[RMDB]
Conditions: 150 mM KOAc, 10 mM MgCl2 and 150 mM bicine (pH 8.5), 24 C. The record gives the reactivity of an RNA of 207 nucleotides to 2A3.
RNA sequence: GGGAACGACUCGAGUAGAGUCGAAAAGACCAAUAACAGAAUGCACCACAGCGUAAAAUCAUCUGAUUGGGUGAGUUGGUCGCACCGCCAGUUGACGAACGAACGCCAAGCCUAAGCCGUCUUUGUGAACACGAGCUAGUCUUCGGACUAGCUCGAACAACGGCUCAGAGUUCGCUCUGAGCCGUUGAAAAGAAACAACAACAACAAC
Reactivity to 2A3 in 0.01 (KOAc 150mM, MgCl2 10mM, bicine 150mM(pH8.5), 24C), signal-to-noise 1, nucleotides 027 to 156: g070a000c010c010a030a060u080a170a030c000a000g150a230a120u200g000c010a010c000c040a060c060a040g080c100g060u210a090a070a050a070u020c020a020u020c060u020g190a180u120u120g050g020g000u030g020a060g020u150u100g030g000u020c010g000c000a030c000c000g070c020c020a020g030u000u000g030a040c020g030a290a000c010g030a090a000c000g020c030c000a000a000g020c000c000u120a030a030g020c040c030g000u050c170u060u090u020g000u020g040a100a030c060a010c100g000a010g000c000u000a000g000u000c000u020u040c250g000g000a000c000u000a020g000c000u000c000g000a000a000